[RMDB]
RNA sequence: GGGAACGACUCGAGUAGAGUCGAAAAGCACAGAGCCUUCUACAUAUCUGAAGAAGAGAUUUCUAGGCAGAAAAACUGCAAGUGCAAAGGCCCCAGGGUCCAGUGAUCAAAAUGUGAGUGUAGGACAUGAGUGUUCACAAUUCGUUGUGAACACUCAAAAAGAAACAACAACAACAAC
Reactivity to DMS in 0.01 (KOAc 150mM, MgCl2 10mM, bicine 150mM(pH8.5), 24C), signal-to-noise 1, nucleotides 027 to 126: g010c000a020c000a150g020a080g000c010c020u000u000c010u020a070c080a050u000a080u000c140u010g050a180a120g000a120a070g000a070g000a110u010u020u000c030u000a200g020g030c020a030g000a170a100a040a130a070c000u000g000c060a130a110g000u010g000c050a050a050a100g000g050c000c000c000c170a170g010g000g030u000c020c070a050g030u000g000a120u010c130a010a040a040a110u000g020u000g000a140g010u000g000u000a050g000g020a040c100a100
This 177-nucleotide RNA was probed chemically with DMS. DMS adducts were read by reverse transcription with MarathonRT. Conditions: 150 mM KOAc, 10 mM MgCl2 and 150 mM bicine (pH 8.5), 24 C. Source: RMDB library OK2TST, as collected in RNAgym.